RNA sequence: GGGAACGACUCGAGUAGAGUCGAAAACUACAGGCAUUUCGAGCUUGGACAGUGUUAGGUCUGCACCGAAUAUACACUGGAGGGCGAUACGUGUACUCAGUCGCCUUCCCAAGGACUGAACGGACCGCUUGUGACCUUGCUUCGGUAAGGUCAUGGGAAAAGAAACAACAACAACAAC
Reactivity to DMS in 0.01 (KOAc 150mM, MgCl2 10mM, bicine 150mM(pH8.5), 24C), signal-to-noise 9, nucleotides 027 to 126: c060u000a080c060a030g010g010c020a120u000u000u010c140g010a160g010c030u000u000g010g010a290c080a040g010u000g010u000u000a100g010g010u000c070u010g010c180a090c040c030g000a090a090u010a090u010a060c050a040c050u000g000g010a100g000g000g010c000g000a040u000a070c150g010u000g010u010a070c170u000c050a090g010u000c000g010c020c030u000u000c020c010c070a100a070g010g000a080c080u000g000a060a090c070g010g000a050c060c060g000
Reactivity to 2A3 in 0.01 (KOAc 150mM, MgCl2 10mM, bicine 150mM(pH8.5), 24C), signal-to-noise 9, nucleotides 027 to 126: c020u080a040c020a010g030g000c040a060u050u130u220c110g080a050g020c010u020u030g030g040a030c030a050g040u030g050u150u120a050g020g030u010c090u140g040c120a030c020c010g020a040a020u160a010u020a100c050a010c050u030g020g010a020g010g020g000c010g010a010u040a100c120g090u120g080u170a100c070u040c090a020g010u000c000g000c000c000u010u010c010c000c000a040a030g040g010a050c080u100g040a130a020c030g020g020a020c010c030g010
The record gives the reactivity of an RNA of 177 nucleotides to DMS and 2A3. The reactions ran in a buffer of 150 mM KOAc, 10 mM MgCl2 and 150 mM bicine (pH 8.5), at 24 C. The 2A3 profile rests on 149,026 reads. DMS adducts were read by reverse transcription with MarathonRT.